Structure probing data (2A3 and DMS) for a 177-nucleotide construct. Values cover nucleotides 27 to 126. Conditions: 150 mM KOAc, 10 mM MgCl2 and 150 mM bicine (pH 8.5), 24 C. Source: RMDB library RFM100, as collected in RNAgym.
RNA sequence: GGGAACGACUCGAGUAGAGUCGAAAAGCACACAGAAAGUCGAGAUUGCCGGCUUCAAAGGCUUUAUCGUUGAUUACGUGUGCUAUAACAACGCCAUAGGUAUCAUUCUUCGUCUUCUUAGGCGCGGGAAAUGAGCAGUCUUCGGACUGCUCAUUUCAAAAGAAACAACAACAACAAC
Reactivity to 2A3 in 0.01 (KOAc 150mM, MgCl2 10mM, bicine 150mM(pH8.5), 24C), signal-to-noise 1, nucleotides 027 to 126: g000c000a010c010a000c000a000g030a020a050a000g020u000c010g000a000g020a020u030u030g000c000c000g110g040c100u240u190c100a060a060a070g020g000c000u000u000u070a080u000c000g020u020u060g060a060u000u180a020c010g000u000g000u000g010c000u000a010u050a010a030c030a030a020c010g030c000c040a100u150a080g060g080u050a070u170c050a070u160u000c050u090u080c000g020u000c030u250u010c010u050u180a050g010g000c020g010c040g050g050
Reactivity to DMS in 0.01 (KOAc 150mM, MgCl2 10mM, bicine 150mM(pH8.5), 24C), signal-to-noise 2, nucleotides 027 to 126: g010c030a010c000a000c000a070g000a190a170a300g000u000c030g000a010g000a070u000u000g040c040c070g000g000c200u060u030c300a230a070a130g000g060c000u000u000u010a000u000c000g030u000u000g000a020u060u000a010c280g000u000g040u000g040c000u010a070u020a090a170c070a050a100c100g020c030c010a060u020a110g010g010u000a100u010c070a030u000u000c020u100u000c040g000u000c080u000u010c090u000u020a130g000g000c030g020c210g000g010